[RMDB]
The record gives the reactivity of an RNA of 177 nucleotides to DMS and 2A3. Values are in units of 0.01, from 0 to 300, in steps of 10. The RNA was probed in 150 mM KOAc, 10 mM MgCl2 and 150 mM bicine (pH 8.5) at 24 C. For DMS the reverse transcriptase was MarathonRT.

RNA sequence: GGGAACGACUCGAGUAGAGUCGAAAAUCGCGGUGGACAGUGCUCAAAAGUUUGAGCUGGAGCGUUGGAGGGUGGGGCGGGUGUGGGGGAGGCCCAACGGUUUGGCAAACUUUAUUCAUUUGCCGCGCAGUUAUUAAUUGUUCGCAAUUAAUAACUGAAAAGAAACAACAACAACAAC
Reactivity to DMS in 0.01 (KOAc 150mM, MgCl2 10mM, bicine 150mM(pH8.5), 24C), signal-to-noise 1, nucleotides 027 to 126: u010c010g030c060g000g010u000g000g000a140c100a170g040u060g010c000u010c000a060a080a140a120g010u040u010u010g000a000g010c020u000g010g000a070g000c190g000u040u000g000g010a130g000g000g000u040g000g010g000g000c200g000g030g000u010g000u010g000g040g000g010g000a130g000g030c020c020c000a030a090c300g020g010u000u020u040g000g020c060a040a070a030c100u000u030u020a100u070u000c170a100u000u010u020g030c000c000g020c120g020
Reactivity to 2A3 in 0.01 (KOAc 150mM, MgCl2 10mM, bicine 150mM(pH8.5), 24C), signal-to-noise 2, nucleotides 027 to 126: u070c020g010c030g000g070u040g040g000a040c040a060g030u030g060c000u030c020a010a050a030a100g080u110u020u010g020a010g010c010u020g030g010a050g000c120g010u140u150g080g000a040g000g070g120u270g060g010g040g070c080g000g000g000u070g000u040g000g000g000g000g000a010g000g030c000c000c000a030a030c040g000g060u070u050u010g020g020c000a000a050a000c000u080u120u120a140u110u160c130a100u030u000u110g010c000c000g000c000g000